[RMDB]
RNA sequence: GGGAACGACUCGAGUAGAGUCGAAAACAGACCUAGAUUACAGAUGUGCGUCUGGAUUUUAAAAAGUAUCAUCACCAUUAUCAUCAUCGUCAUCGUCAUCAUCAUCUAUGUGGGGGAGUACUGAUAUUUUGCCUGCAUAUAUGCCUGAGUACCACAAGGACCGAUGGAUAUUCGUAUCCAUCGGUCCAAAAGAAACAACAACAACAAC
Reactivity to 2A3 in 0.01 (KOAc 150mM, MgCl2 10mM, bicine 150mM(pH8.5), 24C), signal-to-noise 1, nucleotides 027 to 156: c010a000g160a110c000c000u060a030g000a120u060u140a080c010a070g030a040u070g000u050g080c030g070u000c070u130g090g070a090u030u060u110u210a020a070a020a050a010g070u110a090u100c000a000u130c040a000c020c080a000u050u270a070u080c070a010u000c020a010u060c020g040u020c010a030u030c040g000u000c000a000u010c000a000u000c000a000u000c080u010a070u230g010u090g000g000g000g000g000a010g000u060a060c040u030g140a210u100a120u090u100u010u070g110c000c000u000g050c000a000u040a000u000a040u220g000c000c010u060g020a080g010u100a010c010c050a010c010a010a000

Record summary:
An RNA of 207 nucleotides, treated with 2A3 and read out base by base. The data come from the RNA Mapping Database (RMDB), library OK3TST.